[RMDB]
RNA sequence: GGGAACGACUCGAGUAGAGUCGAAAAAAUGACGCUGUUGCCCGCGGCAAUCAGGCUGAUGGCGUUGUUAAUUACGGUUGCCGCCGGGUUAGUGGAAGGCGUCACCGAAGCCACCACGCCCCAGGGAUGCCUAAAUACGGUUCGCCGUAUUUAGGCAAAAAGAAACAACAACAACAAC
Reactivity to DMS in 0.01 (KOAc 150mM, MgCl2 10mM, bicine 150mM(pH8.5), 24C), signal-to-noise 2, nucleotides 027 to 126: a100a070u000g000a000c010g010c000u000g000u010u010g000c000c000c010g040c030g000g000c040a010a010u000c010a110g040g000c090u000g010a050u010g000g030c050g020u000u010g010u000u030a110a100u000u000a080c140g030g000u000u000g000c010c010g010c090c060g040g000g020u010u000a010g040u030g010g000a120a110g010g010c010g040u000c010a040c040c020g010a080a120g000c030c010a040c020c030a040c070g000c050c010c000c020a060g000g000g010a190